An RNA of 177 nucleotides, treated with DMS and read out base by base. Conditions: 150 mM KOAc, 10 mM MgCl2 and 150 mM bicine (pH 8.5), 24 C.
RNA sequence: GGGAACGACUCGAGUAGAGUCGAAAAGCACCUGCGUUCGCUACUACGGCGAGGCGGGGAGCUGCGCUAUCUCGAGCAUGUGGCCAGCGCCGGCGCUCGGGGCCGGGUGCAGCGGUUCGUCGACGCGAUUGGCAACAACGUUCGCGUUGUUGCCAAUAAAAGAAACAACAACAACAAC
Reactivity to DMS in 0.01 (KOAc 150mM, MgCl2 10mM, bicine 150mM(pH8.5), 24C), signal-to-noise 1, nucleotides 027 to 126: g000c030a250c010c010u000g010c020g020u000u000c030g010c020u000a040c300u000a110c300g000g030c000g020a130g000g030c000g000g010g000g040a130g000c010u010g000c020g010c030u000a050u020c010u000c000g000a030g020c030a030u020g020u020g020g020c010c070a200g010c230g020c030c000g010g020c060g020c030u000c030g000g000g000g000c300c150g020g010g020u010g000c000a030g010c020g010g040u000u010c000g010u020c000g000a150c030g000c000g000
Background: The data come from the RNA Mapping Database (RMDB), library OK2TRN.